This 177-nucleotide RNA was probed chemically with DMS. For DMS the reverse transcriptase was MarathonRT. It was measured as part of the RMDB library OK2TST. The DMS profile rests on 979 reads.
RNA sequence: GGGAACGACUCGAGUAGAGUCGAAAAGGCGAGUGGGGCGGUGAGUUUUUAUACCAAUUUUGGGGACAGAGAGACUUUUAGAUCGGCUUAUCAAAGCGCGCAUUUUGAUAUUAUCGCUUACUACACGUACGUAAUGGCGAUUCGUCGCCAUUACGUAAAAAGAAACAACAACAACAAC
Reactivity to DMS in 0.01 (KOAc 150mM, MgCl2 10mM, bicine 150mM(pH8.5), 24C), signal-to-noise 1, nucleotides 027 to 126: g040g000c000g060a070g030u010g050g010g020g000c040g010g000u010g000a060g000u010u000u000u000u010a060u000a130c070c050a070a130u020u020u020u000g010g000g000g010a130c140a070g000a110g010a130g000a050c060u020u000u000u000a070g000a080u010c090g010g000c090u000u000a030u000c090a060a000a050g000c030g030c100g020c140a050u000u000u000u000g000a080u000a040u000u000a110u020c050g010c010u020u000a070c070u000a060c170a070c250g000